[RMDB]
RNA sequence: GGGAACGACUCGAGUAGAGUCGAAAAGAUAUGGACUUAGCCACAGGUCGAUGAAAUCGGAAACGAUGGAGACCGUGGAACUACUAAGUCCUAAGUCAAAACGCUAUGAUGUUCGCAUCAUAGCGAACUCUGAAGCAUGGUUCGCCAUGCUUCAGAGAAAAGAAACAACAACAACAAC
Reactivity to DMS in 0.01 (KOAc 150mM, MgCl2 10mM, bicine 150mM(pH8.5), 24C), signal-to-noise 1, nucleotides 027 to 126: g020a030u000a300u000g000g000a030c020u000u000a000g000c040c000a000c000a150g000g050u000c000g020a220u020g000a080a120a020u000c000g000g000a170a120a180c020g010a100u000g000g000a080g030a000c030c000g000u000g000g000a010a020c010u020a300c000u000a000a000g000u010c000c000u000a000a080g000u010c020a110a050a110a110c010g020c000u000a000u000g000a000u020g000u010u030c290g000c000a000u000c000a000u000a000g020c000g000a010a020
Reactivity to 2A3 in 0.01 (KOAc 150mM, MgCl2 10mM, bicine 150mM(pH8.5), 24C), signal-to-noise 1, nucleotides 027 to 126: g000a030u060a020u150g010g010a000c000u010u000a000g090c000c040a080c180a180g000g000u020c000g130a300u080g040a050a030a000u010c000g020g030a090a060a070c020g000a020u020g000g010a010g000a000c000c000g020u000g000g010a020a010c060u190a000c000u000a140a000g010u000c000c000u010a080a020g030u000c030a000a020a050a210c030g000c000u040a010u000g020a010u030g090u110u070c290g000c140a000u040c000a000u010a000g020c000g000a010a010